[RMDB]
RNA sequence: GGGAACGACUCGAGUAGAGUCGAAAACGGGGGUACACGAGCGGCGAACGGGUGAGUAACACGUGAGUAAUCUGCCCUGCUCUCUGGGAUAACCGCUGGAAACGGUGGCUAAUACCGGAUAGGACGCCACAACUUCGGGAUUCGUCCCGAAGUUGUGAAAAGAAACAACAACAACAAC
Reactivity to DMS in 0.01 (KOAc 150mM, MgCl2 10mM, bicine 150mM(pH8.5), 24C), signal-to-noise 2, nucleotides 027 to 126: c100g010g000g010g060g010u020a090c090a050c110g010a080g030c050g010g010c060g040a120a090c040g010g010g000u010g000a150g020u020a090a100c080a070c090g000u020g020a140g000u000a070a080u020c030u000g000c020c030c020u010g000c040u000c090u000c000u000g010g020g000a120u000a110a040c000c010g040c010u000g000g000a070a040a150c040g010g000u010g010g040c050u000a130a090u020a150c020c020g040g020a040u000a040g000g000a090c060g000c120